[RMDB]
RNA sequence: GGGAACGACUCGAGUAGAGUCGAAAAGAAAUGUGAGAGGUAGUGAUAUAUCUGUUGAAUCUAUUGGAACGAGCAAAUCUCUCGUGAGGCUUAAUAUUGAAAUGCGCGGGGAGUUAACAGACAUAACGCCAAUACGCAUAUUCGUAUGCGUAUUGGCAAAAGAAACAACAACAACAAC
Reactivity to 2A3 in 0.01 (KOAc 150mM, MgCl2 10mM, bicine 150mM(pH8.5), 24C), signal-to-noise 2, nucleotides 027 to 126: g030a000a100a030u130g020u090g010a030g000a000g070g100u070a000g040u030g140a040u000a000u030a020u130c050u020g010u030u030g000a020a020u000c040u110a150u110u100g140g050a100a060c000g010a000g050c030a030a040a110u040c050u000c000u000c060g010u010g010a020g060g000c010u080u000a100a020u030a090u070u260g050a140a040a140u130g020c030g000c000g000g000g000g000a030g060u010u110a000a020c000a000g040a020c060a110u140a010a010c060
Reactivity to DMS in 0.01 (KOAc 150mM, MgCl2 10mM, bicine 150mM(pH8.5), 24C), signal-to-noise 2, nucleotides 027 to 126: g000a060a040a080u000g040u000g000a030g000a000g000g000u020a040g000u010g040a110u040a040u030a030u080c010u020g000u000u010g030a060a130u010c030u000a070u000u030g000g010a150a120c110g000a040g000c150a000a060a040u040c070u000c040u000c060g000u000g000a050g020g000c090u020u010a020a000u030a100u050u010g000a060a060a080u000g000c000g010c140g020g000g030g000a040g000u000u010a050a040c090a040g000a110c160a050u030a040a060c080